The record gives the reactivity of an RNA of 207 nucleotides to 2A3 and DMS. The reactions ran in a buffer of 150 mM KOAc, 10 mM MgCl2 and 150 mM bicine (pH 8.5), at 24 C. For 2A3, 1,860 sequencing reads were counted. For DMS, 5,487 sequencing reads were counted. Values cover nucleotides 27 to 156.

RNA sequence: GGGAACGACUCGAGUAGAGUCGAAAAAGUGGACCUUUAUUGUUACCGAGCAUUGUUUGUUUGGUCCACGCUCGGACUUUCUUCUGGCGAGAGCCAGUUCACAGACAGCUAGCGGAAGGUAGGACGUAGCAGGAAGGUAGACGCUAGCGCUACGAUAACUAAUAUAGGUCUUCGGACCUAUAUUAGUAAAAGAAACAACAACAACAAC
Reactivity to 2A3 in 0.01 (KOAc 150mM, MgCl2 10mM, bicine 150mM(pH8.5), 24C), signal-to-noise 3, nucleotides 027 to 156: a000g040u030g010g000a030c020c000u120u150u130a180u120u200g090u060u120a070c010c020g000a000g020c020a100u100u130g070u120u170u070g090u080u080u120g020g010u010c000c000a010c000g000c000u000c000g030g000a030c030u070u100u010c020u110u000c010u020g000g000c000g010a080g000a010g050c000c000a010g000u080u100c050a060c000a030g120a080c040a010g010c010u020a000g030c020g030g050a040a040g050g030u100a010g030g060a030c030g030u070a020g020c030a020g030g040a020a040g000g010u050a030g020a070c010g000c020u000a010g020c030g000c000u040a020c040g060a050u030a130
Reactivity to DMS in 0.01 (KOAc 150mM, MgCl2 10mM, bicine 150mM(pH8.5), 24C), signal-to-noise 3, nucleotides 027 to 156: a090g010u000g010g010a060c010c010u000u000u000a070u020u010g010u000u010a100c020c020g010a130g030c040a140u010u000g020u000u000u000g000u000u010u000g010g030u000c020c010a030c040g010c050u010c030g020g010a090c060u000u000u000c020u010u000c000u010g010g010c030g020a300g000a300g020c000c000a040g000u000u000c070a090c090a130g020a070c090a120g050c020u000a020g010c020g020g010a130a070g010g020u000a050g020g020a080c050g040u000a090g020c090a100g000g030a060a060g020g020u010a080g010a100c010g020c020u000a050g010c020g040c020u000a080c060g010a110u020a090